[RMDB]
RNA sequence: GGGAACGACUCGAGUAGAGUCGAAAAAUGUUUACGAUGUAGCGGAAAAUGUGGUCUGGCGGCAGAGAGGCUACGUUGUUGAAACUCCCUAGGUACACGUAACUGGUGAUGCGGGUAAUCUCGUCAACGCGGUCGCCGACGGGAGUGGUCGUCGACCAACCCCUAAGCUAUUCGUAGCUUAGGGGUUAAAAGAAACAACAACAACAAC
Reactivity to 2A3 in 0.01 (KOAc 150mM, MgCl2 10mM, bicine 150mM(pH8.5), 24C), signal-to-noise 3, nucleotides 027 to 156: a000u140g030u040u030u050a090c060g000a010u080g010u050a010g040c020g070g090a020a090a030a060u090g040u040g040g050u030c080u110g020g010c070g030g000c120a000g050a000g000a010g110g000c000u030a020c020g010u010u010g050u020u070g040a090a020a050c020u040c010c020c000u000a050g020g010u070a030c150a000c100g040u060a080a060c030u100g090g000u100g090a070u150g060c030g000g000g050u130a100a160u100c030u000c050g080u030c050a000a070c030g000c020g080g000u000c060g010c030c000g010a010c020g000g020g030a020g000u020g000g010u010c020g030u000c020g000a010c000c000
Reactivity to DMS in 0.01 (KOAc 150mM, MgCl2 10mM, bicine 150mM(pH8.5), 24C), signal-to-noise 2, nucleotides 027 to 156: a080u010g040u000u010u000a050c050g020a090u010g020u000a030g010c050g060g030a050a030a060a140u010g030u000g000g020u000c030u010g040g010c070g040g010c020a080g010a170g020a090g020g010c030u000a040c050g020u000u000g040u010u000g000a090a110a080c040u000c020c020c010u020a140g020g010u000a050c060a030c020g000u010a070a050c050u000g050g030u000g000a120u010g040c080g030g000g010u000a120a110u000c020u000c090g010u000c020a070a040c020g010c010g000g010u000c090g010c050c000g010a100c120g000g010g000a090g060u000g000g050u000c000g030u010c030g030a060c080c030
Structure probing data (2A3 and DMS) for a 207-nucleotide construct. Source: RMDB library OK3TST, as collected in RNAgym. For 2A3, 1,504 sequencing reads were counted. The reactions ran in a buffer of 150 mM KOAc, 10 mM MgCl2 and 150 mM bicine (pH 8.5), at 24 C.